[RMDB]
RNA sequence: GGGAACGACUCGAGUAGAGUCGAAAAGAGCGACUUAAUAUUAGAUCGUCGCGAUCUAAAGAGUCCGACACGCUGUCGCGGGGCAGCACCUCCCGGGAAAGGGCCCUUGGUUCGUAUUCGAAAGAAAGGAUACCGGUAAUUUCGAUUACCGGUAUCCAAAAGAAACAACAACAACAAC
Reactivity to DMS in 0.01 (KOAc 150mM, MgCl2 10mM, bicine 150mM(pH8.5), 24C), signal-to-noise 1, nucleotides 027 to 126: g000a120g050c140g000a030c000u020u000a070a140u000a180u000u000a000g000a050u000c000g030u010c190g000c150g000a000u000c000u010a010a060a130g000a040g000u000c000c030g000a160c140a090c120g030c020u000g050u000c040g000c240g000g020g000g010c050a030g000c060a150c100c090u020c010c020c090g000g020g000a010a070a150g010g000g010c040c000c040u000u000g020g000u010u010c030g000u010a180u000u000c000g010a060a080a190g010a080a050a120